[RMDB]
RNA sequence: GGGAACGACUCGAGUAGAGUCGAAAAUGAUGCUGGAAAUGUAGUUUUUCACCACACAUCAAAUGCUUGUAACGAAAUGGCCAUCUCAAGCGUUCAUCGAGAGAGAAAUUGAAGAAACUAAAACCAGGACGUAUGGUAUCUUCGGAUACCAUACGUCAAAAGAAACAACAACAACAAC
Reactivity to 2A3 in 0.01 (KOAc 150mM, MgCl2 10mM, bicine 150mM(pH8.5), 24C), signal-to-noise 5, nucleotides 027 to 126: u170g090a040u120g010c020u030g040g010a050a220a090u140g110u130a090g010u040u030u040u060u020c030a060c080c010a070c000a010c010a100u080c020a020a080a000u070g040c030u070u070g020u180a100a070c060g040a090a180a240u130g130g040c050c010a050u020c040u010c040a000a030g000c010g010u090u060c040a110u100c110g050a050g020a010g010a000g030a070a120a080u120u110g030a030a040g060a090a060a030c020u030a060a020a050a020c010c010a050g000
Reactivity to DMS in 0.01 (KOAc 150mM, MgCl2 10mM, bicine 150mM(pH8.5), 24C), signal-to-noise 2, nucleotides 027 to 126: u010g010a090u010g020c270u000g000g030a070a120a090u000g030u100a080g010u000u000u000u000u000c020a050c010c070a050c050a100c100a040u000c060a060a060a050u010g000c010u040u000g010u040a120a030c030g000a110a100a060u000g000g000c060c000a040u000c080u000c010a040a020g020c000g060u000u000c120a030u050c020g060a100g000a280g010a100g070a020a030a050u030u000g000a070a080g040a040a000a030c060u000a040a040a130a120c020c030a040g010